Chemical mapping of a 177-nucleotide RNA with DMS and 2A3. Source: RMDB library OK1LIB, as collected in RNAgym. Conditions: 150 mM KOAc, 10 mM MgCl2 and 150 mM bicine (pH 8.5), 24 C.
RNA sequence: GGGAACGACUCGAGUAGAGUCGAAAAAAUAGGCUAGCUGUUUUCGAGCGGUGUAUUUGCGUGGGGGGUGAAUGUGGAUACGGACAAUGACAGGCCCACGCUGGCGAGGGUUUACCGCAGCCUGCGGGACCACACUUUCUUUCGAGAAAGUGUGGUCAAAAGAAACAACAACAACAAC
Reactivity to DMS in 0.01 (KOAc 150mM, MgCl2 10mM, bicine 150mM(pH8.5), 24C), signal-to-noise 3, nucleotides 027 to 126: a090a020u010a040g010g000c020u000a030g020c070u000g010u000u020u030u010c080g020a120g010c040g000g000u000g020u020a070u010u000u020g010c040g040u000g020g000g000g000g010g020u000g020a040a060u020g000u000g020g010a110u020a080c120g000g000a080c070a070a050u000g010a090c040a080g000g020c010c020c010a040c010g000c010u000g010g000c040g010a110g000g020g020u000u020u010a100c010c010g000c030a200g000c050c020u010g000c060g010g000
Reactivity to 2A3 in 0.01 (KOAc 150mM, MgCl2 10mM, bicine 150mM(pH8.5), 24C), signal-to-noise 3, nucleotides 027 to 126: a000a000u170a060g030g000c030u030a050g000c020u030g090u050u040u060u110c060g080a060g000c050g040g000u090g020u060a150u060u170u130g040c050g010u040g030g010g000g010g040g010u070g050a090a040u090g010u040g050g030a040u050a140c080g040g000a020c060a070a040u080g030a030c000a040g120g010c000c060c000a020c000g000c020u020g020g020c020g010a060g000g020g020u120u110u090a060c000c000g020c000a020g020c000c000u020g010c030g060g020